[RMDB]
An RNA of 177 nucleotides, treated with 2A3 and read out base by base. Reactivities are given for positions 27 through 126. For 2A3, 1,167 sequencing reads were counted.
RNA sequence: GGGAACGACUCGAGUAGAGUCGAAAAGCUCGGAGACGAGCAAGGCUGACAAAACGCUGUCCCAACCUCCACGUGGUGUCGGCUGGAUAAUGCUGCAUUAUGUUGCAUUUAUCAACUGGGAAGCAAACCACCCUGGACCAUUCGUGGUCCAGGGUGGAAAAGAAACAACAACAACAAC
Reactivity to 2A3 in 0.01 (KOAc 150mM, MgCl2 10mM, bicine 150mM(pH8.5), 24C), signal-to-noise 2, nucleotides 027 to 126: g000c000u010c000g020g000a070g030a020c010g020a000g000c000a000a120g000g020c040u010g000a020c040a020a100a080a030c200g010c010u000g200u090c000c020c000a000a000c000c010u040c010c000a150c070g120u170g000g000u030g010u020c000g010g000c000u030g020g000a020u000a030a000u000g000c000u000g010c040a080u100u210a160u300g010u020u000g000c000a000u010u010u110a000u020c000a010a020c020u010g010g030g000a010a000g000c000a070a000a000